[RMDB]
The record gives the reactivity of an RNA of 207 nucleotides to 2A3. Values are in units of 0.01, from 0 to 300, in steps of 10. 2A3 is a SHAPE reagent: it acylates the 2'-hydroxyl of flexible nucleotides of all four kinds. The reactions ran in a buffer of 150 mM KOAc, 10 mM MgCl2 and 150 mM bicine (pH 8.5), at 24 C.
RNA sequence: GGGAACGACUCGAGUAGAGUCGAAAAAAACUUUUGUGACUUGCUGAAACGGGACUAAUCUCCUCACCGAGGCUAAGCAAGUAAAAUACGCCUUUCAUAUCCUUACCUGAGGGUGGUAAGGAAAUAACCUGCAACGCUUCCUUCGGGAAGCGUUGAAGUCGUAAUGUAGCUUCGGCUACAUUACGACAAAAGAAACAACAACAACAAC
Reactivity to 2A3 in 0.01 (KOAc 150mM, MgCl2 10mM, bicine 150mM(pH8.5), 24C), signal-to-noise 2, nucleotides 027 to 156: a000a000a000c110u160u060u060u100g090u040g020a050c010u020u010g030c010u040g020a010a060a060c030g010g000g000a010c020u070a070a150u060c040u050c020c030u080c070a090c000c090g040a030g050g060c050u040a040a000g000c010a010a000g020u120a020a040a010a010u090a030c050g090c000c020u060u110u070c050a070u050a050u080c000c000u010u000a010c000c010u040g020a120g020g040g040u050g010g000u000a000a010g000g000a000a030a000u010a010a010c030c080u110g000c010a000a000c000g020c000u000u000c000c000u000u010c050g090g000g000a000a000g000c000g000u000u000g000a000a000